[RMDB]
RNA sequence: GGGAACGACUCGAGUAGAGUCGAAAAUACUCAUGGGAAGUCGGCGUGACUCCCGACUAACGUGGAUGUCCGCUUUCUGGCUCCAGGCAAAGAGUGUUGGUGCGGAGGUUGGUUAGUGGCGCGCCAACAUAGUCGGGUUUUUCGAAACCCGACUAUGAAAAGAAACAACAACAACAAC
Reactivity to 2A3 in 0.01 (KOAc 150mM, MgCl2 10mM, bicine 150mM(pH8.5), 24C), signal-to-noise 1, nucleotides 027 to 126: u050a020c000u010c010a080u070g020g000g030a050a080g030u040c010g040g030c050g090u180g010a030c000u010c010c000c010g030a010c020u060a090a030c040g080u130g040g020a070u110g040u030c000c000g000c000u030u090u010c040u010g020g000c010u010c000c000a030g050g040c020a020a030a070g100a050g010u040g010u020u020g000g010u020g000c000g000g020a070g020g020u090u070g020g010u020u040a040g000u010g010g000c000g000c000g000c000c000a000a010
Reactivity to DMS in 0.01 (KOAc 150mM, MgCl2 10mM, bicine 150mM(pH8.5), 24C), signal-to-noise 6, nucleotides 027 to 126: u020a080c020u010c010a110u020g000g000g010a150a040g020u000c020g000g000c040g010u030g000a030c050u010c030c000c000g000a120c180u030a080a110c080g020u040g000g000a030u020g010u010c010c020g000c070u000u010u020c090u020g000g010c020u020c000c010a080g020g020c160a080a090a110g000a070g010u000g010u010u000g000g010u000g000c020g000g000a100g000g010u010u000g010g000u010u010a070g020u010g000g000c030g010c020g000c000c000a020a050

Background
This 177-nucleotide RNA was probed chemically with 2A3 and DMS. Conditions: 150 mM KOAc, 10 mM MgCl2 and 150 mM bicine (pH 8.5), 24 C. For DMS, 21,606 sequencing reads were counted. For DMS the reverse transcriptase was MarathonRT.